[RMDB]
RNA sequence: GGGAACGACUCGAGUAGAGUCGAAAAGAUAUGGACUCCAUACAGCAACAGCGUUGACCUCGGAAACGAGGUAACGACAUGCUGUGGAGUCCUAAGUCAAAGUGGCGUCCGUUCGCGGACGCCACAACACGAUAUAAUCGUUCGCGAUUAUAUCGUGAAAAGAAACAACAACAACAAC
Reactivity to 2A3 in 0.01 (KOAc 150mM, MgCl2 10mM, bicine 150mM(pH8.5), 24C), signal-to-noise 1, nucleotides 027 to 126: g000a000u020a010u080g010g000a010c000u070c020c000a100u160a300c060a020g010c090a130a280c030a300g050c020g000u030u110g300a260c010c000u000c030g000g000a000a030a000c000g000a000g000g020u000a000a010c000g070a050c070a230u300g000c000u030g000u000g010g000a000g000u000c000c000u020a000a000g000u030c020a050a050a180g010u040g040g000c000g000u000c150c000g050u160u190c300g010c050g000g000a000c000g000c000c000a040c010a000a000
Record summary:
Structure probing data (2A3) for a 177-nucleotide construct. The RNA was probed in 150 mM KOAc, 10 mM MgCl2 and 150 mM bicine (pH 8.5) at 24 C. For 2A3 the reverse transcriptase was SuperScript II with manganese. Source: RMDB library TTRDES, as collected in RNAgym. Reactivities are given for positions 27 through 126.